[RMDB]
RNA sequence: GGGAACGACUCGAGUAGAGUCGAAAAGGGUAUGCAGCUGUAACCGUAAGGGGAAAGCAAAGUAAUUUGCGCAGUCUUUAAGGGAUGCUACAUAUGUCGCGGGAAAUUCAAUAUAUAAGAGCUCUCGUCUGUUGCAAGAUAUAAGUUACUGAGCAUGCAUCUAUAUGAACUUCGGUUCAUAUAGAUGAAAAGAAACAACAACAACAAC
Reactivity to 2A3 in 0.01 (KOAc 150mM, MgCl2 10mM, bicine 150mM(pH8.5), 24C), signal-to-noise 4, nucleotides 027 to 156: g060g000g010u020a020u060g040c040a020g000c030u050g030u120a090a050c010c020g020u060a070a070g050g010g000g020a080a080a050g000c010a000a000a050g030u110a040a160u040u050u030g000c040g000c010a000g030u040c040u070u200u120a050a040g030g010g000a040u140g020c000u030a030c010a050u130a070u110g070u070c040g000c060g070g000g100a030a080a010u270u130c050a140a030u090a040u030a020u060a230a050g000a010g040c000u000c020u010c030g010u020c070u030g070u040u200g010c010a060a030g030a040u060a010u020a110a050g030u040u050a030c050u040g010a010g040c020a000u050g020
Reactivity to DMS in 0.01 (KOAc 150mM, MgCl2 10mM, bicine 150mM(pH8.5), 24C), signal-to-noise 1, nucleotides 027 to 156: g030g010g040u000a040u000g000c030a050g000c010u010g000u000a090a100c040c020g020u010a080a130g020g010g030g000a080a130a140g020c000a070a080a060g000u010a060a180u000u000u000g000c030g000c080a130g000u000c050u000u000u000a060a060g030g000g010a180u000g000c010u000a030c030a170u000a040u010g000u010c060g040c060g000g020g000a070a050a090u020u010c050a020a060u000a090u010a110u000a060a070g000a130g010c010u000c030u010c040g000u000c040u000g000u000u000g010c020a070a130g010a040u000a030u010a040a090g030u000u000a100c010u000g010a070g000c040a060u000g000

Chemical mapping of a 207-nucleotide RNA with 2A3 and DMS. It was measured as part of the RMDB library ARCHII. For DMS, 3,339 sequencing reads were counted. For 2A3, 2,186 sequencing reads were counted.